The data come from the RNA Mapping Database (RMDB), library OK2TRN. An RNA of 177 nucleotides, treated with DMS and read out base by base.

RNA sequence: GGGAACGACUCGAGUAGAGUCGAAAAGAGCGUUGUCCGAAGUGCUCGACGAGGGCCUGGAACUGAACUCCCGGAAGUAACCCCCAAUAGGCGCAGAACGGCAAUGUUCCUUCUCGACGCCAACGUGUCUCACCACUCUAUUCGUAGAGUGGUGAGAAAAAGAAACAACAACAACAAC
Reactivity to DMS in 0.01 (KOAc 150mM, MgCl2 10mM, bicine 150mM(pH8.5), 24C), signal-to-noise 3, nucleotides 027 to 126: g030a040g030c040g020u000u000g000u000c020c040g060a160a190g000u000g020c010u010c030g010a110c180g000a100g000g000g020c040c030u010g020g010a080a080c100u010g020a150a110c150u000c010c010c020g000g000a060a110g030u020a130a200c040c020c010c010c010a070a080u010a120g010g030c000g000c010a050g000a040a080c260g000g000c070a080a070u020g000u020u000c030c020u000u000c000u000c030g010a180c050g020c020c030a070a050c210g040u010g010
Record summary
For DMS, 1,550 sequencing reads were counted. Reactivities are given for positions 27 through 126.